[RMDB]
RNA sequence: GGGAACGACUCGAGUAGAGUCGAAAACGACCUAAUGACCGCCUACGUGGCCACCAUGCCGGAAGUCGCGGCGGCCUCCACUCUGCUCGACGGCGGCGGCGUGGACACCAGCGAGGUGACCGAUUACAACAUCAAAUAUCAGGUAGGGGCGAAGUGGGUCCCCUUGUAUUUUCGAAUACAAGGGGACAAAAGAAACAACAACAACAAC
Reactivity to 2A3 in 0.01 (KOAc 150mM, MgCl2 10mM, bicine 150mM(pH8.5), 24C), signal-to-noise 1, nucleotides 027 to 156: c030g030a010c050c000u030a060a000u110g060a100c050c000g050c000c000u160a200c040g020u060g140g000c040c030a020c000c000a050u100g030c070c020g060g040a090a210g000u000c000g000c040g080g030c000g010g080c020c000u070c040c040a110c000u150c040u090g030c080u090c170g090a120c100g010g100c010g020g030c010g030g000c000g000u000g000g010a030c030a020c020c010a000g030c030g040a130g000g000u000g000a030c010c160g040a020u100u090a040c060a120a020c020a100u140c060a080a020a190u160a050u110c050a010g000g000u030a070g000g000g010g000c030g000a090a000g040u140g120g000
This 207-nucleotide RNA was probed chemically with 2A3. It was measured as part of the RMDB library OK3TST. The RNA was probed in 150 mM KOAc, 10 mM MgCl2 and 150 mM bicine (pH 8.5) at 24 C.